[RMDB]
RNA sequence: GGGAACGACUCGAGUAGAGUCGAAAAGCAUAGUCUUAGAUAUAGAAAAAGGAUGAAGAGUCGAAAGUCCAACGAGACUCGAAAGAAAAGUUGGAGAAACAUCCGAAAUAUUUCUAAGUCUAUGCGAGGGAUAUGUAAUCUUCGGAUUACAUAUCCCAAAAGAAACAACAACAACAAC
Reactivity to DMS in 0.01 (KOAc 150mM, MgCl2 10mM, bicine 150mM(pH8.5), 24C), signal-to-noise 2, nucleotides 027 to 126: g000c000a000u000a000g000u000c010u000u000a000g020a000u000a020u000a020g020a100a130a010a140a140g020g030a040u000g000a100a030g010a110g010u020c140g000a130a140a110g020u010c070c000a020a000c030g000a220g000a240c220u050c040g000a060a110a090g060a080a100a020a110g010u000u000g040g000a080g010a070a050a120c020a000u000c000c000g000a070a080a110u000a000u000u020u000c000u010a000a010g010u000c000u000a000u020g020c000g010a050
Reactivity to 2A3 in 0.01 (KOAc 150mM, MgCl2 10mM, bicine 150mM(pH8.5), 24C), signal-to-noise 6, nucleotides 027 to 126: g000c000a010u000a000g000u010c000u000u000a010g000a010u010a000u000a050g170a070a290a050a100a020g030g000a000u020g030a060a140g060a040g240u190c130g080a140a060a000g070u000c000c010a000a000c010g030a030g130a140c060u050c100g100a090a140a040g030a020a110a020a010g010u010u020g020g030a030g100a040a100a010c010a000u000c000c000g020a010a040a010u020a000u010u060u000c010u000a000a000g000u000c000u000a000u000g000c000g000a070
An RNA of 177 nucleotides, treated with DMS and 2A3 and read out base by base.
It was measured as part of the RMDB library OK1LIB.
Values cover nucleotides 27 to 126.
For 2A3 the reverse transcriptase was SuperScript II with manganese.
The DMS profile rests on 1,963 reads.
Conditions: 150 mM KOAc, 10 mM MgCl2 and 150 mM bicine (pH 8.5), 24 C.